[RMDB]
RNA sequence: GGGAACGACUCGAGUAGAGUCGAAAAGAUAUGGAACAAAUAGUGCAGGAACGAUGAAAUCGGAAACGAUGGAGUUCCUGAACUACACUGAUUUGUUCCUAAGUCAAAAGGUCAGUUCGCUGACCAACAUAGCAGGGACGUUCGCGUCCCUGCUAUGAAAAGAAACAACAACAACAAC
Reactivity to DMS in 0.01 (KOAc 150mM, MgCl2 10mM, bicine 150mM(pH8.5), 24C), signal-to-noise 1, nucleotides 027 to 126: g000a040u010a300u020g000g000a030a000c000a010a020a020u010a010g010u000g010c010a020g040g000a020a020c000g020a080u040g020a090a120a010u000c000g000g000a140a070a220c010g000a000u000g000g000a070g040u020u000c000c000u010g030a000a020c050u050a280c010a000c000u000g000a010u000u000u000g000u000u000c000c020u000a090a140g020u000c040a070a100a110a080g000g030u000c000a000g000u000u010c300g000c000u000g000a020c000c020a040a070

Structure probing data (DMS) for a 177-nucleotide construct. DMS adducts were read by reverse transcription with MarathonRT. The RNA was probed in 150 mM KOAc, 10 mM MgCl2 and 150 mM bicine (pH 8.5) at 24 C.